The record gives the reactivity of an RNA of 207 nucleotides to 2A3. Reactivities are rounded to 0.1 and cut off at 0 and 3.
[RMDB]
RNA sequence: GGGAACGACUCGAGUAGAGUCGAAAAGAUAUGGAUCAUUGUCAGCACGACACAUACUAUGAAGUGAGGUCGGAAACGACCUCAUGGAGUAUGUCAAGUGCUUGGAUUUAUGAUCCUAAGUCAAAUCUGUCAACGUGGUUCGCCACGUUGACAGAAAUCUCACUCUGGGAUUCGUCCCAGAGUGAGAAAAAGAAACAACAACAACAAC
Reactivity to 2A3 in 0.01 (KOAc 150mM, MgCl2 10mM, bicine 150mM(pH8.5), 24C), signal-to-noise 2, nucleotides 027 to 156: g040a020u060a020u190g000g010a000u000c010a040u010u020g010u010c000a010g000c010a010c010g000a010c010a000c010a010u010a010c020u040a100u300g030a050a030g020u000g010a010g000g000u020c000g000g000a030a040a150c000g010a000c000c020u000c000a000u000g000g010a000g000u010a000u010g020u020c050a070a060g000u000g010c000u030u060g010g000a000u230u300u130a010u040g000a000u030c010c000u010a140a000g020u010c030a040a000a050u020c000u010g000u000c010a010a000c010g000u030g010g110u090u150c270g040c190c000a000c000g000u000u000g000a000c000a000g000a000a000a000

High 2A3 reactivity points to a flexible backbone, as in loops and unpaired stretches. The RNA was probed in 150 mM KOAc, 10 mM MgCl2 and 150 mM bicine (pH 8.5) at 24 C.